Background:
Conditions: 150 mM KOAc, 10 mM MgCl2 and 150 mM bicine (pH 8.5), 24 C. The record gives the reactivity of an RNA of 207 nucleotides to 2A3. Reactivities are given for positions 27 through 156. For 2A3 the reverse transcriptase was SuperScript II with manganese.
[RMDB]
RNA sequence: GGGAACGACUCGAGUAGAGUCGAAAAGUUUGUGGUUCGCCACAAACAAAAAAGAUAUGGAGCUAGACUCGCGAUAAGGUCCGGUCGGAAACGACCGAAGACCUUUUGACGCGAGUAUAGCUCCUAAGUCAAAAAUCGAUGGGUUCGCCCAUCGAAAGUAUUCGUUCUACUUCGGUAGAACGAAUACAAAAGAAACAACAACAACAAC
Reactivity to 2A3 in 0.01 (KOAc 150mM, MgCl2 10mM, bicine 150mM(pH8.5), 24C), signal-to-noise 1, nucleotides 027 to 156: g000u000u010u010g020u010g010g030u010u110c250g060c070c010a020c020a010a010a000c020a060a200a020a000a010a000g020a010u030a010u030g010g000a000g010c000u020a010g010a030c010u000c010g000c110g030a020u060a300a000g020g000u000c020c000g000g000u000c000g000g000a020a010a020c000g020a000c020c000g030a020a010g000a000c000c080u010u000u040u090g130a130c150g000c020g000a000g000u000a000u000a000g010c000u000c000c000u000a000a000g010u000c000a000a010a010a120a080u040c000g000a010u000g000g050g000u020u050c160g140c040c030c000a000u000c000g000a000a000a010
For 2A3, 1,208 sequencing reads were counted. Values are in units of 0.01, from 0 to 300, in steps of 10.